[RMDB]
RNA sequence: GGGAACGACUCGAGUAGAGUCGAAAAGGAUCGUGAUCUGAUCAGGUACGGAUCUCUAGCGAUCUGAUCUCGACGAUCAUGAUGUCGAUCAGCUAGCGAUCGAUCUAGUACGAUCGAUCCGUCGUACGUCAUAAGGGGCAUUCGUGCCCCUUAUGACAAAAGAAACAACAACAACAAC
Reactivity to 2A3 in 0.01 (KOAc 150mM, MgCl2 10mM, bicine 150mM(pH8.5), 24C), signal-to-noise 3, nucleotides 027 to 126: g050g020a020u060c020g020u060g020a030u030c080u040g010a120u030c020a020g090g000u080a100c030g040g030a040u030c050u020c090u120a040g050c030g040a020u000c000u020g000a010u000c030u020c080g060a030c020g000a020u070c020a060u140g070a020u090g070u110c040g000a050u010c030a020g070c020u090a020g010c020g080a050u050c010g000a010u010c020u040a080g100u100a060c080g010a010u000c000g010a030u000c030c000g010u020c020g050u060a050c080
Reactivity to DMS in 0.01 (KOAc 150mM, MgCl2 10mM, bicine 150mM(pH8.5), 24C), signal-to-noise 4, nucleotides 027 to 126: g020g000a000u000c030g030u020g010a040u010c000u000g000a090u000c020a080g010g030u000a100c060g000g000a010u000c020u000c130u000a220g000c130g000a040u000c010u010g000a050u000c040u000c080g010a120c110g000a060u000c080a070u010g010a050u020g020u010c020g010a040u000c070a110g020c110u000a100g010c110g010a020u000c040g010a010u000c080u000a130g020u000a040c130g000a010u000c020g000a040u000c010c060g010u000c040g010u010a060c120
The record gives the reactivity of an RNA of 177 nucleotides to 2A3 and DMS. The reactions ran in a buffer of 150 mM KOAc, 10 mM MgCl2 and 150 mM bicine (pH 8.5), at 24 C. The 2A3 profile rests on 4,295 reads. The data come from the RNA Mapping Database (RMDB), library OK2TRN.